[RMDB]
RNA sequence: GGGAACGACUCGAGUAGAGUCGAAAAGAUAUGGAUGUGUGGAGUUCCCGUACUGCUAUAAUCUUGGCUCGGAAACGAGCCAAGGUAGCAGUAUAGGGAACGAUGAAACACAUCCUAAGUCAAAACGGGGUAAUAACGUUCGCGUUAUUACCCCGAAGCGUUAUUUAUUGUUCGCAAUAAAUAACGCAAAAGAAACAACAACAACAAC
Reactivity to 2A3 in 0.01 (KOAc 150mM, MgCl2 10mM, bicine 150mM(pH8.5), 24C), signal-to-noise 2, nucleotides 027 to 156: g020a010u060a020u100g000g000a000u000g000u000g000u010g000g020a020g000u010u010c020c000c000g000u000a000c000u010g020c000u020a020u020a220a230u120c000u000u000g000g000c010u000c000g010g020a100a090a050c000g010a010g000c000c000a000a000g010g000u030a000g010c000a000g000u000a000u050a040g000g000g010a000a000c000g000a000u010g010a010a010a000c000a000c000a010u000c000c000u000a010a000g020u020c020a000a030a080a090c010g000g020g000g000u000a000a010u000a010a010c010g010u020u040c210g010c000g090u000u010a000u010u010a000c010c000c000c010g000a050a000
Reactivity to DMS in 0.01 (KOAc 150mM, MgCl2 10mM, bicine 150mM(pH8.5), 24C), signal-to-noise 1, nucleotides 027 to 156: g050a150u000a240u010g020g000a000u000g000u000g030u000g000g000a160g000u000u010c010c000c010g000u010a050c010u000g060c020u010a060u000a230a090u000c010u000u000g000g050c000u000c000g000g000a100a100a300c000g000a070g000c040c010a000a000g030g020u010a020g030c000a050g000u000a000u010a120g100g000g000a010a010c000g000a080u000g000a120a230a050c000a050c000a010u000c000c000u000a000a070g010u010c020a050a030a180a180c010g000g080g000g060u030a000a010u000a000a030c000g000u000u010c300g040c000g010u010u010a000u000u010a030c000c010c000c000g000a020a040

Background
Chemical mapping of a 207-nucleotide RNA with 2A3 and DMS. The DMS profile rests on 2,555 reads. The reactions ran in a buffer of 150 mM KOAc, 10 mM MgCl2 and 150 mM bicine (pH 8.5), at 24 C. For DMS the reverse transcriptase was MarathonRT.